[RMDB]
RNA sequence: GGGAACGACUCGAGUAGAGUCGAAAAGGAUGGGAAAGCAUGCACGUACGGAAACCAUCCUCGGUGAUGGCGUUCCUGGUUCGGUUAGCACCAUGAGAUACGCCUCGUGCAUGCGAAAGGAUGGUAGGAGAAUUCUCAGCAUGCGAAAGGAUGGGGAGCCGAGGGCCUGAUUCGUCAGGCCCUCGGCAAAAGAAACAACAACAACAAC
Reactivity to 2A3 in 0.01 (KOAc 150mM, MgCl2 10mM, bicine 150mM(pH8.5), 24C), signal-to-noise 2, nucleotides 027 to 156: g040g000a050u070g040g000g020a030a070a000g000c000a000u060g000c020a010c060g030u180a030c070g110g000a070a060a070c000c000a010u020c060c000u000c030g030g060u230g090a160u150g010g000c030g000u020u000c000c000u010g010g020u040u050c060g030g110u130u240a010g030c030a010c000c000a060u140g030a040g010a240u210a060c030g000c030c010u020c040g020u020g000c000a010u030g000c000g000a000a000a000g040g010a010u080g000g100u060a060g030g030a030g000a020a040u130u020c030u010c050a030g000c040a010u110g040c020g030a000a040a000g010g000a010u030g000g000g010g000a010
Conditions: 150 mM KOAc, 10 mM MgCl2 and 150 mM bicine (pH 8.5), 24 C. Chemical mapping of a 207-nucleotide RNA with 2A3. The 2A3 profile rests on 1,020 reads. Reactivities are given for positions 27 through 156. The data come from the RNA Mapping Database (RMDB), library OK3TST.